[RMDB]
RNA sequence: GGGAACGACUCGAGUAGAGUCGAAAAGCCUCUCGAUACGAAAGGGCCGCGAGCCUAUCGAGUUUGGAGUCAUCCGGGCCGAAGGGUUGAGACGCACCCACAGACGGGAGCCUCCAGGAGGGUUUGAUCAAAUAAUAGACUUCGGUCUAUUAUUUGAAAAAGAAACAACAACAACAAC
Reactivity to DMS in 0.01 (KOAc 150mM, MgCl2 10mM, bicine 150mM(pH8.5), 24C), signal-to-noise 4, nucleotides 027 to 126: g010c030c010u000c020u000c030g000a060u000a100c180g000a070a180a120g000g010g020c010c020g020c200g000a200g010c020c020u000a040u000c010g000a080g020u000u000u000g020g010a040g010u000c100a100u010c010c000g010g010g040c020c030g000a100a300g000g000g000u000u000g000a140g010a110c120g020c120a050c010c010c010a140c080a090g010a110c050g000g010g010a090g020c160c000u000c010c030a060g010g010a060g020g010g000u000u010u000g010a140
Reactivity to 2A3 in 0.01 (KOAc 150mM, MgCl2 10mM, bicine 150mM(pH8.5), 24C), signal-to-noise 2, nucleotides 027 to 126: g020c020c000u010c000u000c020g050a030u050a180c040g090a120a050a110g020g000g000c040c020g130c080g030a060g010c000c000u050a070u020c010g010a040g010u000u090u110g000g000a020g000u020c010a100u020c060c020g040g060g000c030c010g070a060a050g030g000g000u040u040g060a050g010a060c060g020c040a030c010c020c000a020c020a030g070a010c040g000g020g020a000g020c000c000u000c010c000a010g020g030a010g040g020g030u040u090u150g030a030